[RMDB]
RNA sequence: GGGAACGACUCGAGUAGAGUCGAAAACGCCGGGUUUCGCGCACUCGAAGAAGCCCAUCAAGAGUUCGGGGUGGCGGUGGUACACCAAUGAGCAUCGCCAACGACGGCGCGAAGUCACACUAUCAGGGAGCGUGUCGGGAGUGUGGCAACGAGUUCGCACGAUAGAGCUGUUCGCAGCUCUAUCGUGAAAAGAAACAACAACAACAAC
Reactivity to 2A3 in 0.01 (KOAc 150mM, MgCl2 10mM, bicine 150mM(pH8.5), 24C), signal-to-noise 2, nucleotides 027 to 156: c070g050c030c040g080g010g000u000u010u080c000g020c020g010c010a070c050u040c020g080a130a090g080a080a100g060c000c020c000a040u110c040a010a120g030a030g060u130u180c120g020g030g030g040u060g000g000c020g000g040u010g050g050u160a070c040a060c100c100a070a240u270g030a010g000c000a010u000c000g030c010c010a010a000c020g080a000c040g030g020c000g000c020g020a030a000g000u050c000a000c000a000c100u130a150u260c050a070g080g020g050a120g110c060g020u090g160u200c170g040g020g000a050g000u070g000u010g020g000c010a000a000c090g020a030g040u080u060c030g010

The data come from the RNA Mapping Database (RMDB), library OK3TST. This 207-nucleotide RNA was probed chemically with 2A3. The RNA was probed in 150 mM KOAc, 10 mM MgCl2 and 150 mM bicine (pH 8.5) at 24 C.